[RMDB]
RNA sequence: GGGAACGACUCGAGUAGAGUCGAAAACUGUGAUACUUACCUCAACACUUCCUUCUGAGGGUACAGACAGCACCUUCUUAAAUGAACACAGGCUUGAUGCUUCAAUUGCCAGACCAGUAGAGGGUCCACAGGUAGUGGCCUGUAGAAUUGCUUAGACGUCGUUAUACAUUUUCGAAUGUAUAACGACAAAAGAAACAACAACAACAAC
Reactivity to DMS in 0.01 (KOAc 150mM, MgCl2 10mM, bicine 150mM(pH8.5), 24C), signal-to-noise 2, nucleotides 027 to 156: c010u020g010u020g040a130u000a090c050u000u020a090c010c000u000c040a060a110c040a090c170u010u000c040c040u010u000c060u010g020a050g040g020g040u000a000c040a130g000a300c090a070g030c040a060c030c020u000u010c060u000u000a020a120a110u030g020a120a060c040a210c050a020g010g020c030u000u000g020a080u000g000c040u000u000c100a100a120u000u010g030c030c010a140g010a060c040c010a110g030u010a140g000a150g010g010g020u010c020c040a000c030a040g020g020u000a070g020u000g020g000c020c000u000g040u000a100g020a140a100u000u000g010c040u010u040a140g020a210c220
Reactivity to 2A3 in 0.01 (KOAc 150mM, MgCl2 10mM, bicine 150mM(pH8.5), 24C), signal-to-noise 3, nucleotides 027 to 156: c050u060g020u050g090a080u080a120c040u070u110a070c050c000u030c020a090a010c040a070c060u100u060c010c000u050u090c050u120g020a020g050g000g000u020a020c060a060g140a040c030a020g020c020a040c020c000u070u070c010u070u140a140a180a160u210g070a090a000c060a010c020a080g000g030c000u070u070g060a080u140g050c030u100u090c060a060a190u120u080g010c000c000a010g000a070c020c010a020g060u170a030g110a120g040g110g000u030c020c020a070c040a040g060g020u050a030g060u060g030g020c000c000u000g000u000a020g050a060a050u100u130g000c030u070u070a040g000a080c070
Conditions: 150 mM KOAc, 10 mM MgCl2 and 150 mM bicine (pH 8.5), 24 C.
An RNA of 207 nucleotides, treated with DMS and 2A3 and read out base by base.
For 2A3 the reverse transcriptase was SuperScript II with manganese.
For 2A3, 2,686 sequencing reads were counted.
It was measured as part of the RMDB library OK3TST.